Conditions: 150 mM KOAc, 10 mM MgCl2 and 150 mM bicine (pH 8.5), 24 C.
The record gives the reactivity of an RNA of 177 nucleotides to 2A3.
The 2A3 profile rests on 695 reads.

RNA sequence: GGGAACGACUCGAGUAGAGUCGAAAACAGCCGCUGCCGCUGUCGCUGCUGGCCACCCACCCGAUCGAUCUGAGCCGGAACUAGGCUACUCCGCCGCCGAGCUUGCCAGAGCAGCGCGUCGCGUCGCAGGCAGCGGAUAGUUCGCUAUCCGCUGCCUAAAAGAAACAACAACAACAAC
Reactivity to 2A3 in 0.01 (KOAc 150mM, MgCl2 10mM, bicine 150mM(pH8.5), 24C), signal-to-noise 1, nucleotides 027 to 126: c010a000g060c020c020g030c000u000g030c050c080g050c040u030g050u100c000g040c050u060g010c010u030g060g000c030c030a050c000c000c020a000c030c000c000g080a080u040c080g030a000u020c000u100g020a050g050c040c000g040g050a090a040c040u080a080g080g000c010u030a050c060u030c030c050g050c040c000g020c000c000g000a000g000c000u020u010g020c000c000a040g010a000g090c010a050g000c000g000c000g080u060c030g020c040g000u050c000g060c040